[RMDB]
RNA sequence: GGGAACGACUCGAGUAGAGUCGAAAAGCAACCCUUCGGGGUUGCAAAAAGCGUACUACACUAGAGGUACAGGGAGUACCGCUCCCAAAUAGGAGCGCUGUACGUUGAUCUGUACUCCCCACCUAGUGUAUCGCAAAAACGCGGUUUCGACCGCGAAGAUAUUCCUUAAGUUCGCUUAAGGAAUAUCAAAAGAAACAACAACAACAAC
Reactivity to DMS in 0.01 (KOAc 150mM, MgCl2 10mM, bicine 150mM(pH8.5), 24C), signal-to-noise 3, nucleotides 027 to 156: g000c000a000a020c000c010c010u000u000c290g070g020g020g010u020u000g000c000a010a020a030a070a090g000c010g010u000a040c030u010a010c020a020c000u000a010g010a250g030g030u000a010c030a030g010g000g000a010g010u000a010c100c030g030c000u000c010c010c020a060a200a190u000a040g000g010a010g030c000g010c170u000g040u000a010c010g020u000u000g000a030u000c030u000g010u000a020c010u000c260c030c000c040a300c110c010u000a000g020u010g010u000a000u000c010g020c010a060a060a060a060a110c020g010c000g000g000u000u000u010c260g010a030c000c000g010c010g010a020a100
Reactivity to 2A3 in 0.01 (KOAc 150mM, MgCl2 10mM, bicine 150mM(pH8.5), 24C), signal-to-noise 6, nucleotides 027 to 156: g000c000a000a010c000c000c030u010u060c170g070g000g010g000u010u010g000c020a070a020a020a020a000g020c030g010u070a080c030u010a000c010a000c000u010a000g000a020g030g040u000a010c010a010g020g000g000a020g000u000a000c000c010g010c000u020c010c010c020a120a200a080u210a050g000g000a000g000c040g030c290u160g030u010a010c000g060u090u010g000a010u000c000u000g000u000a000c010u050c000c000c010c000a030c000c000u000a000g000u010g000u010a040u300c030g000c000a040a030a050a000a060c020g000c000g000g020u050u060u140c250g100a050c000c000g000c000g010a020a000